Overview
Structure probing data (DMS and 2A3) for a 177-nucleotide construct.
RNA sequence: GGGAACGACUCGAGUAGAGUCGAAAACAAAACUGACCAGCUAUGAGGUCAUACAUCGUCAUAGAAAAACAAAACAAAACUGACCAGAUAUGAGGUCAUACAUCGUCAUAUCAAACAAAACAACAAACGGUCCUAAUAUAUUCGUAUAUUAGGACCGAAAAGAAACAACAACAACAAC
Reactivity to DMS in 0.01 (KOAc 150mM, MgCl2 10mM, bicine 150mM(pH8.5), 24C), signal-to-noise 3, nucleotides 027 to 126: c100a070a100a060a220c300u010g020a010c000c020a300g020c000u010a000u030g000a060g000g020u000c000a050u130a080c300a140u030c030g010u040c000a000u000a010g020a090a080a080a120a090c260a090a020a200a060c300a050a000a100a050c300u000g000a000c010c000a300g000a010u000a000u010g040a000g010g000u000c010a060u030a050c100a040u070c230g040u000c020a010u000a010u000c000a140a070a020c230a050a000a010a040c200a000a020c170a010a030a070
Reactivity to 2A3 in 0.01 (KOAc 150mM, MgCl2 10mM, bicine 150mM(pH8.5), 24C), signal-to-noise 5, nucleotides 027 to 126: c020a000a070a010a100c070u040g010a010c010c010a010g030c000u010a010u030g010a020g000g000u000c030a010u160a060c070a110u130c160g070u010c000a010u020a020g130a060a110a010a000a000c140a040a130a020a000c130a050a140a030a090c130u100g000a000c020c000a010g000a010u020a000u000g000a000g000g000u000c060a000u200a050c080a060u200c100g040u000c010a000u000a000u010c000a000a010a030c070a020a060a010a000c050a010a000c020a000a090a000
Record summary
For 2A3 the reverse transcriptase was SuperScript II with manganese. The data come from the RNA Mapping Database (RMDB), library OK1LIB. For DMS, 2,015 sequencing reads were counted. Reactivities are given for positions 27 through 126. As a SHAPE reagent, 2A3 marks flexible, mostly unpaired nucleotides at the ribose 2'-OH. The 2A3 profile rests on 5,579 reads.